[RMDB]
RNA sequence: GGGAACGACUCGAGUAGAGUCGAAAACACAACAACAGAACAAACAAUUACAAAUGCUUAGAUUCGGUAUGCUCGCAGGGCUCAGCAGACUUGUUUGUCCAGGUGAGCUUGGAAAGAAGUUCUCAACAAGUUGCAGAAGAAUCGAGGACAACAUUGCCUUACAGAAACCUUUCGAGGUUUCUGUAAGAAAAGAAACAACAACAACAAC
Reactivity to 2A3 in 0.01 (KOAc 150mM, MgCl2 10mM, bicine 150mM(pH8.5), 24C), signal-to-noise 3, nucleotides 027 to 156: c070a000c020a110a000c020a060a020c010a090g160a100a020c060a070a150a020c050a140a080u200u180a110c040a040a150a030u060g010c010u050u090a070g010a050u040u020c030g000g070u090a020u080g010c010u010c060g080c090a090g050g000g000c010u010c040a050g040c020a000g030a130c030u080u080g030u070u080u100g050u000c030c050a020g050g020u050g000a000g000c020u020u020g050g130a000a110a000g040a050a000g040u030u020c040u010c010a030a080c020a030a010g020u060u040g050c020a000g030a170a010g000a020a070u000c010g010a030g000g040a020c010a040a010c010a110u050u140g030c010
Reactivity to DMS in 0.01 (KOAc 150mM, MgCl2 10mM, bicine 150mM(pH8.5), 24C), signal-to-noise 1, nucleotides 027 to 156: c090a110c010a100a080c040a080a070c000a080g000a070a080c020a120a050a090c010a120a110u010u010a190c110a070a140a070u000g010c010u000u000a090g020a240u000u000c020g060g010u000a050u000g040c000u010c040g040c140a200g010g010g000c010u010c010a090g020c030a090g000a040c080u010u010g020u000u000u000g020u010c060c010a120g000g000u010g000a080g030c010u000u000g010g000a110a000a080g020a100a130g020u000u000c000u000c020a120a100c050a040a140g000u010u000g010c020a060g000a090a270g010a090a070u000c070g000a110g020g000a070c030a080a030c010a060u000u000g040c080